An RNA of 177 nucleotides, treated with 2A3 and DMS and read out base by base. For 2A3, 2,229 sequencing reads were counted. 2A3 is a SHAPE reagent: it acylates the 2'-hydroxyl of flexible nucleotides of all four kinds. DMS adducts were read by reverse transcription with MarathonRT. It was measured as part of the RMDB library OK2TRN. High DMS reactivity at an A or C suggests that its Watson-Crick edge is free.
RNA sequence: GGGAACGACUCGAGUAGAGUCGAAAAAACUCCACAUGCUGGUGCAUAUACGCCCUUGAGCUACUUCAAAUGUGGGUGUUUCAGUAACCACGUUCCAUGCCUGAGGAUUUAGCAGAGAGGAACACUGCAUUCCCAUCGAUUUCGAUCGAUGGGAAUGAAAAGAAACAACAACAACAAC
Reactivity to 2A3 in 0.01 (KOAc 150mM, MgCl2 10mM, bicine 150mM(pH8.5), 24C), signal-to-noise 3, nucleotides 027 to 126: a000a000c070u070c040c020a010c000a010u150g160c080u080g010g060u110g030c040a050u200a010u050a230c150g030c020c000c000u080u100g060a050g040c100u140a090c030u120u070c040a070a080a070u060g000u020g020g000g030u100g090u020u020u030c020a010g040u010a070a060c020c000a010c070g000u040u000c040c010a090u130g080c010c020u030g040a100g120g020a240u120u130u150a020g000c030a000g080a010g010a020g080g020a020a000c010a010c030u060g000
Reactivity to DMS in 0.01 (KOAc 150mM, MgCl2 10mM, bicine 150mM(pH8.5), 24C), signal-to-noise 4, nucleotides 027 to 126: a030a020c030u000c000c000a060c060a000u010g030c160u010g010g000u000g030c050a120u010a150u000a110c150g010c030c010c050u010u010g010a120g030c100u000a060c080u000u000c050a040a070a070u010g020u000g000g010g010u000g010u000u000u000c080a110g000u010a050a290c050c040a100c090g020u000u000c020c020a070u000g000c070c040u000g000a120g010g000a150u000u010u000a050g010c000a020g020a140g000a140g010g000a030a050c070a100c120u000g000